[RMDB]
RNA sequence: GGGAACGACUCGAGUAGAGUCGAAAAGGACAAGGGUAGUACCCUUGGCAACUGCACAGAAAACUUACCCCUAAAUAUUCAAUGAGGAUUUGAUUCGACUCUUACCUUGGCGACAAGGUAAGAUAGAGCCUUGGGAUGAAUUCGUUCAUCCCAAGGCAAAAGAAACAACAACAACAAC
Reactivity to 2A3 in 0.01 (KOAc 150mM, MgCl2 10mM, bicine 150mM(pH8.5), 24C), signal-to-noise 3, nucleotides 027 to 126: g100g000a030c020a020a000g030g040g000u020a050g000u220a220c000c000c000u000u000g000g000c030a030a030c050u110g020c040a050c000a060g250a010a140a130a070c030u060u110a080c000c000c000c000u000a110a090a020u230a040u100u080c040a050a060u150g050a100g230g020a110u050u080u110g090a090u110u010c020g010a020c140u000c000u000u000a000c000c000u000u000g040g020c030g010a070c000a000a000g000g000u000a000a000g000a000u000a020g000a000
Reactivity to DMS in 0.01 (KOAc 150mM, MgCl2 10mM, bicine 150mM(pH8.5), 24C), signal-to-noise 1, nucleotides 027 to 126: g030g000a230c070a060a000g030g010g000u000a150g000u000a300c000c000c010u000u000g010g000c030a070a150c050u000g010c100a100c040a100g020a070a070a050a130c010u020u000a150c110c000c000c020u000a040a030a120u010a170u020u010c150a040a110u000g000a070g020g010a140u010u000u010g000a060u000u000c020g010a060c100u000c000u000u020a000c000c000u000u000g150g010c220g000a060c000a010a000g000g000u000a000a000g010a000u000a060g040a120